[RMDB]
RNA sequence: GGGAACGACUCGAGUAGAGUCGAAAACUGGAUAUUUUUUGAACAAACGACACUCCAACUACUGCUAAAGUCGGGGGGACUAAAAAAAAAGUUGCUCGGCUUGCGCUUGGUCAGUUUACUUACUACAAGCUUUCGAAGAAUUCGUUCUUCGAAAGCUAAAAGAAACAACAACAACAAC
Reactivity to DMS in 0.01 (KOAc 150mM, MgCl2 10mM, bicine 150mM(pH8.5), 24C), signal-to-noise 1, nucleotides 027 to 126: c010u020g010g010a120u020a000u000u000u010u050u000u000g050a180a070c160a010a020a120c020g000a030c100a120c030u030c040c080a070a080c070u050a030c150u000g000c080u030a110a010a060g000u010c020g000g000g020g030g010g000a060c090u010a000a000a000a000a080a130a180a030a130g040u030u000g040c000u000c000g000g000c000u000u000g000c050g000c050u000u010g000g010u000c150a030g000u000u000u010a040c080u040u010a120c120u040a040c200a020
Reactivity to 2A3 in 0.01 (KOAc 150mM, MgCl2 10mM, bicine 150mM(pH8.5), 24C), signal-to-noise 2, nucleotides 027 to 126: c030u060g080g010a100u070a200u100u110u030u020u020u090g090a040a020c030a080a050a010c030g070a000c010a000c060u070c040c000a080a020c040u040a040c040u020g020c000u130a170a000a000g000u000c020g010g010g000g030g030g040a020c050u090a070a120a120a000a000a000a000a000a000g020u000u020g030c010u010c030g000g000c000u000u020g000c000g000c020u030u030g020g020u120c000a000g000u000u040u030a130c040u060u020a030c040u090a060c010a120